[RMDB]
RNA sequence: GGGAACGACUCGAGUAGAGUCGAAAAGGUCCCGCCUCUCCUGGUCGGUGAACCCCCUGGCUUUGGAUUUCCUCCCAGGUGUAGAAUCAAUCUCCAUGUCCUCUCGCCUGGGCCUCUUCGCCGGGGGAAAGUGACUGGUUCGCCAGUCACAAAAGAAACAACAACAACAAC
Reactivity to 2A3 in 0.01 (KOAc 150mM, MgCl2 10mM, bicine 150mM(pH8.5), 24C), signal-to-noise 8, nucleotides 027 to 129: g050g020u020c000c000c000g010c000c000u050c000u030c000c010u020g030g010u040c050g010g040u080g070a070a070c000c000c000c000c040u020g010g000c010u150u090u150g030g010a070u050u080u110c020c030u070c010c000c010a000g020g000u030g040u140a010g020a010a020u060c040a020a090u070c080u020c140c050a100u100g020u030c010c010u000c010u000c010g010c000c000u000g000g000g000c000c000u060c000u090u090c050g000c000c000g000g000g000g000g000a050a000a000
Reactivity to DMS in 0.01 (KOAc 150mM, MgCl2 10mM, bicine 150mM(pH8.5), 24C), signal-to-noise 6, nucleotides 027 to 129: g030g010u000c030c040c030g040c080c020u010c000u020c020c040u020g030g010u030c070g040g000u060g000a170a190c100c010c000c000c010u020g000g000c070u020u020u030g030g030a060u000u000u000c020c020u050c030c000c010a030g000g050u020g020u130a000g030a000a000u000c100a070a090u000c050u040c110c060a070u030g030u030c130c040u030c060u020c000g000c010c010u030g030g020g000c160c020u070c070u050u040c180g000c050c050g000g000g000g000g000a000a000a000